[RMDB]
RNA sequence: GGGAACGACUCGAGUAGAGUCGAAAAUUUACCAUCACAAUGUCAGAUAAUGUCUAUGUACCAGUCCCAACAGACACAGACAAAUUGUUAGCUGGACUUGUUACACCAGUCAAGAAAUUGCCAGAUACAACACCGUUAUGUUCGCAUAACGGUGUUGAAAAGAAACAACAACAACAAC
Reactivity to 2A3 in 0.01 (KOAc 150mM, MgCl2 10mM, bicine 150mM(pH8.5), 24C), signal-to-noise 2, nucleotides 027 to 126: u020u050u050a090c010c000a050u040c020a010c030a160a070u150g010u080c020a030g030a120u060a160a050u200g000u010c020u040a080u110g010u000a080c020c000a020g030u000c010c020c000a030a050c030a040g030a020c020a000c030a090g080a040c000a030a070a120u150u060g070u080u100a050g000c040u030g000g000a030c000u050u060g010u000u030a030c060a020c030c030a020g010u030c020a040a000g070a050a080a020u080u110g060c010c000a030g010a110u080a170
Reactivity to DMS in 0.01 (KOAc 150mM, MgCl2 10mM, bicine 150mM(pH8.5), 24C), signal-to-noise 3, nucleotides 027 to 126: u030u000u000a130c080c000a090u000c060a050c080a050a070u000g000u020c080a110g000a120u000a090a100u020g010u010c010u010a110u000g010u000a090c070c120a090g000u000c000c040c040a070a080c130a120g000a060c070a020c060a030g000a060c040a050a090a130u000u010g030u000u000a090g040c000u000g020g020a070c070u000u000g000u000u010a100c130a070c060c040a000g000u000c090a090a130g000a050a050a080u000u000g000c000c020a100g030a140u010a100